[RMDB]
RNA sequence: GGGAACGACUCGAGUAGAGUCGAAAAACGGCCGGAUACGUCCGGCCGAAUUCCGCUGAUGACUUCUGUCAGUGCCACGUGUCUGGGCCACUGAGACCACAUGAUGGGAUUGAGGACCUGAGGAAAAAUGUUAUUAUUGGUUCGCCAAUAAUAACAUAAAAGAAACAACAACAACAAC
Reactivity to 2A3 in 0.01 (KOAc 150mM, MgCl2 10mM, bicine 150mM(pH8.5), 24C), signal-to-noise 9, nucleotides 027 to 126: a000c000g000g000c000c000g000g010a010u030a040c220g090u020c010c000g000g000c000c000g000a000a000u010u000c000c000g020c050u050g030a090u050g020a060c040u050u030c030u110g120u030c020a020g020u030g110c020c010a060c030g060u060g030u040c090u100g010g020g020c040c010a100c080u130g040a070g030a090c010c020a030c010a080u130g050a170u040g070g010g020a040u040u080g030a050g020g030a040c010c030u040g020a070g050g000a080a050a030a010
Reactivity to DMS in 0.01 (KOAc 150mM, MgCl2 10mM, bicine 150mM(pH8.5), 24C), signal-to-noise 9, nucleotides 027 to 126: a060c010g010g010c010c000g010g010a030u010a090c160g010u010c000c000g010g020c010c000g000a010a010u010u000c010c010g010c110u010g000a100u000g000a090c070u020u010c050u010g010u010c010a030g020u000g000c030c020a060c070g010u010g000u010c090u010g010g010g000c040c030a080c100u020g010a120g000a090c040c020a060c060a050u010g010a110u010g000g000g000a100u000u000g000a130g000g000a060c190c030u010g000a110g000g010a040a070a050a090